[RMDB]
RNA sequence: GGGAACGACUCGAGUAGAGUCGAAAAGAUAUGGAUCAACUCGCGAUAAGUUAUAGCUCGGAAACGAGCUGAUAACUUUUGACGCGAUCAAGUCCUAAGUCAAAAUCGUGUCCUUCGGGACACGAAACUACAUAUUGCUGUUCGCAGCAAUAUGUAGAAAAGAAACAACAACAACAAC
Reactivity to DMS in 0.01 (KOAc 150mM, MgCl2 10mM, bicine 150mM(pH8.5), 24C), signal-to-noise 6, nucleotides 027 to 126: g000a040u010a250u010g010g000a020u000c020a110a200c300u000c000g000c000g010a150u010a020a030g010u000u000a000u000a020g010c000u000c000g010g000a050a050a090c000g020a000g010c000u010g010a010u000a000a010c000u010u000u000u000g010a190c060g000c010g010a000u010c100a090a180g000u000c000c000u000a050a160g010u010c030a080a070a110a100u000c000g020u000g000u000c010c000u000u010c200g020g000g000a010c010a000c000g010a000a020a120
Reactivity to 2A3 in 0.01 (KOAc 150mM, MgCl2 10mM, bicine 150mM(pH8.5), 24C), signal-to-noise 5, nucleotides 027 to 126: g020a000u050a020u110g010g010a030u180c020a010a060c030u020c010g010c010g100a130u050a280a020g000u000u010a010u020a030g000c010u000c020g000g010a020a060a040c000g000a000g000c000u010g000a000u000a000a000c000u030u030u060u220g180a040c000g000c000g000a000u010c020a020a030g010u000c000c010u010a110a020g050u030c040a030a000a020a300u050c000g000u000g000u010c020c000u020u060c300g090g000g010a000c000a000c000g000a000a000a000
Structure probing data (DMS and 2A3) for a 177-nucleotide construct.
For 2A3, 14,381 sequencing reads were counted.
2A3 adducts were read by reverse transcription with SuperScript II with manganese.
It was measured as part of the RMDB library TTRDEL.